[RMDB]
RNA sequence: GGGAACGACUCGAGUAGAGUCGAAAAACAACAGAUAGCUGGAACCAGCGUAGAAUUCUACGCAUAUCCAUAGCGAAUGGUACCUGUAAAGAAAAUAAGUGUGGAUGUACAAGUACCAACAGCCGUACAUGCCAUGGUGAUGUCAAUCACAUAUGCACGUGAGUAGGUAGUUCGCUACCUACUCACGAAAAGAAACAACAACAACAAC
Reactivity to 2A3 in 0.01 (KOAc 150mM, MgCl2 10mM, bicine 150mM(pH8.5), 24C), signal-to-noise 5, nucleotides 027 to 156: a000c040a000a000c020a020g060a100u150a060g010c020u040g020g010a070a080c070c050a040g010c000g000u020a000g040a140a280u300u110c010u010a010c010g000c000a010u020a030u050c010c010a030u080a030g000c010g070a050a030u050g000g040u020a040c010c020u020g010u080a060a140a030g170a060a110a030a050u210a080a060g090u020g010u020g120g030a010u050g000u010a010c030a010a040g010u020a060c020c010a020a060c070a080g040c000c050g000u040a030c010a020u070g130c040c010a030u070g060g030u020g000a020u040g150u170c060a080a020u020c000a020c000a040u090a030u100g040c040a020
Reactivity to DMS in 0.01 (KOAc 150mM, MgCl2 10mM, bicine 150mM(pH8.5), 24C), signal-to-noise 2, nucleotides 027 to 156: a040c020a080a080c050a050g010a050u000a060g000c040u010g000g000a180a060c130c050a170g000c010g000u000a010g000a190a110u000u000c010u000a010c020g010c020a180u010a060u000c010c020a120u000a060g000c030g010a070a170u000g010g000u000a010c010c010u010g020u000a090a030a090g000a100a040a160a130u000a060a100g020u000g030u010g020g020a120u000g000u010a020c030a040a050g020u000a030c040c010a060a130c030a160g000c000c040g000u000a020c080a080u000g030c060c020a080u000g000g000u000g010a050u000g000u010c150a060a060u010c030a020c010a050u000a080u010g010c080a130